[RMDB]
Structure probing data (DMS) for a 177-nucleotide construct.

RNA sequence: GGGAACGACUCGAGUAGAGUCGAAAACGCAAAAGGCAUGCAAAGAAAAAAACUAGGCAGGGAGGCGCUUACCUGAGAAAGGAGCCCCGGGGCAACUCUUCUCAGAAUCCAGCAAGAGGCGUGGAGACACCAUAAUUAUCUUCGGAUAAUUAUGGUGAAAAGAAACAACAACAACAAC
Reactivity to DMS in 0.01 (KOAc 150mM, MgCl2 10mM, bicine 150mM(pH8.5), 24C), signal-to-noise 1, nucleotides 027 to 126: c100g010c080a040a050a050a050g010g000c020a020u000g010c060a060a070a130g030a020a010a040a080a050a060a140c060u000a050g000g020c040a040g000g010g000a050g000g000c090g040c100u000u010a050c110c010u000g020a010g000a000a070a030g000g000a300g040c060c060c100c200g050g000g010g020c040a050a110c010u000c080u010u000c010u000c010a030g000a120a090u000c040c010a050g000c090a040a110g020a050g040g000c110g000u000g000g000a090g010a240